This 207-nucleotide RNA was probed chemically with 2A3 and DMS. For 2A3 the reverse transcriptase was SuperScript II with manganese. Source: RMDB library M2RFPK, as collected in RNAgym.
RNA sequence: GGGAACGACUCGAGUAGAGUCGAAAAGGUCAUCCUUCACAGGAUCGUGUGGACGUCCUGCUCGGGGCGGAAGCAUUAAAACCAUUCGAGCUAGUCAAUGCGUGGCGUGUCUCUCCGCAGCGUGUUGUGUAUGAGAGUGGAUUCGUCCACUCUCAAAUAAGUAUGUCAAGUUCGCUUGACAUACUUAAAAAGAAACAACAACAACAAC
Reactivity to 2A3 in 0.01 (KOAc 150mM, MgCl2 10mM, bicine 150mM(pH8.5), 24C), signal-to-noise 4, nucleotides 027 to 156: g080g040u090c040a040u050c010c020u130u200c070a050c000a110g050g000a050u050c050g040u060g040u060g040g120a030c010g010u010c000c020u050g030c040u030c030g010g000g010g000c020g020g010a030a000g000c010a000u050u140a050a020a010a070c040c020a030u060u080c050g020a000g060c090u140a050g230u110c020a040a030u060g000c020g010u030g020g010c010g020u030g050u010c040u030c010u000c080c010g000c020a020g030c020g010u020g010u000u000g000u010g040u030a130u110g010a000g000a000g010u000g000g000a010u020u040c150g020u020c030c000a000c000u000c000u000c000a000a000a000
Reactivity to DMS in 0.01 (KOAc 150mM, MgCl2 10mM, bicine 150mM(pH8.5), 24C), signal-to-noise 3, nucleotides 027 to 156: g040g020u010c050a100u000c020c020u000u000c190a120c150a120g020g000a030u010c080g020u000g040u000g010g000a300c020g000u000c020c010u010g020c070u000c080g000g020g010g010c000g000g000a250a240g000c040a080u000u010a040a080a110a120c020c030a160u000u000c060g000a100g020c050u000a150g010u000c040a050a040u010g020c000g020u010g000g020c040g020u010g000u000c090u000c020u000c100c010g000c050a080g000c040g020u020g020u010u010g020u000g010u010a080u010g000a020g000a050g010u000g010g000a060u000u010c300g000u010c010c000a000c010u010c000u000c010a000a030a070